Structure probing data (2A3 and DMS) for a 177-nucleotide construct. The reactions ran in a buffer of 150 mM KOAc, 10 mM MgCl2 and 150 mM bicine (pH 8.5), at 24 C. Reactivities are given for positions 27 through 126. The data come from the RNA Mapping Database (RMDB), libraries RFM100 and RFMREP.
RNA sequence: GGGAACGACUCGAGUAGAGUCGAAAAAGUCGGCCUACUUACGAGUAGGCCGACAACGCACAAGUGAUGAACAACAAAAGGACUUAAUACUGAAGCCUGAUGUGAUAUUGUGAUGUCUGAUGUGCAACAAAUGACGAUGGUUCGCCAUCGUCAUUUGAAAAGAAACAACAACAACAAC
Reactivity to 2A3 in 0.01 (KOAc 150mM, MgCl2 10mM, bicine 150mM(pH8.5), 24C), signal-to-noise 4, nucleotides 027 to 126: a000g010u000c020g000g000c000c000u010a010c000u030u050a020c140g010a000g000u020a000g000g020c030c000g000a000c000a000a000c010g000c000a010c000a010a110g110u010g080a040u050g050a040a000c020a020a030c010a020a040a030a010g000g070a090c010u110u140a100a130u190a300c140u170g110a060a000g000c010c000u020g000a050u060g060u030g040a130u060a110u250u100g040u010g120a170u110g000u000c030u050g050a060u050g070u000g010c000a020a020
Reactivity to DMS in 0.01 (KOAc 150mM, MgCl2 10mM, bicine 150mM(pH8.5), 24C), signal-to-noise 4, nucleotides 027 to 126: a070g010u000c000g010g020c010c000u000a000c010u010u010a110c150g040a040g030u000a000g020g020c000c000g020a000c010a010a030c170g000c000a000c000a040a110g030u010g000a030u000g020a130a020c030a100a030c020a010a050a250a030g000g000a080c000u000u020a050a160u070a120c280u060g000a050a040g000c010c010u000g000a240u000g000u010g010a160u030a070u030u020g000u000g000a120u020g020u010c010u010g010a180u000g000u000g000c020a100a180